[RMDB]
RNA sequence: GGGAACGACUCGAGUAGAGUCGAAAAAAAGCGAAAGCUGAUGUAUAGGGGCUGACGCCUGCCCGGUGCUGGAAGGUUAAGGGGAUCCGUUAACGCAAGUGAAGCGGUGAACUUAAGCCCCAGUAAAAAACUUCCUGAUUUUCGAAUCAGGAAGUUUAAAAGAAACAACAACAACAAC
Reactivity to DMS in 0.01 (KOAc 150mM, MgCl2 10mM, bicine 150mM(pH8.5), 24C), signal-to-noise 2, nucleotides 027 to 126: a010a040a010g000c010g000a090a190a130g000c000u000g000a200u010g010u000a120u010a160g030g010g000g050c020u000g000a300c170g000c010c010u000g010c030c010c010g020g050u020g010c010u000g000g000a090a050g050g030u010u010a140a110g000g010g000g020a110u010c000c010g050u000u010a300a000c010g000c300a060a180g030u020g000a090a200g010c010g040g000u000g000a300a160c000u000u010a060a090g030c030c000c000c000a000g000u000a010a010a040